[RMDB]
Structure probing data (DMS) for a 177-nucleotide construct.
The data come from the RNA Mapping Database (RMDB), library OK2TRN.
RNA sequence: GGGAACGACUCGAGUAGAGUCGAAAAAUGCUCGCCCAUGGGAUGGGCCUGGGGCAGAUAAGCGUGGAUGAUUUGGUGGCCUACGCGAUGGCUGGCAUGAAGCGCGCCGCACGGGGCGACGUGCGCGGCCCGAACUUUAGUUCGCUAAAGUUCGGGCAAAAGAAACAACAACAACAAC
Reactivity to DMS in 0.01 (KOAc 150mM, MgCl2 10mM, bicine 150mM(pH8.5), 24C), signal-to-noise 1, nucleotides 027 to 126: a060u000g000c010u000c070g010c010c000c020a130u020g010g030g000a300u000g000g000g020c050c090u000g000g000g000g000c020a030g000a110u000a030a100g000c050g040u000g000g010a130u000g010a110u000u010u010g010g010u000g000g000c080c000u000a080c150g020c080g020a080u040g010g010c030u010g000g000c060a040u000g000a120a100g010c030g000c040g030c050c010g000c070a140c090g000g020g020g000c090g000a020c000g000u000g000c050g020c120g000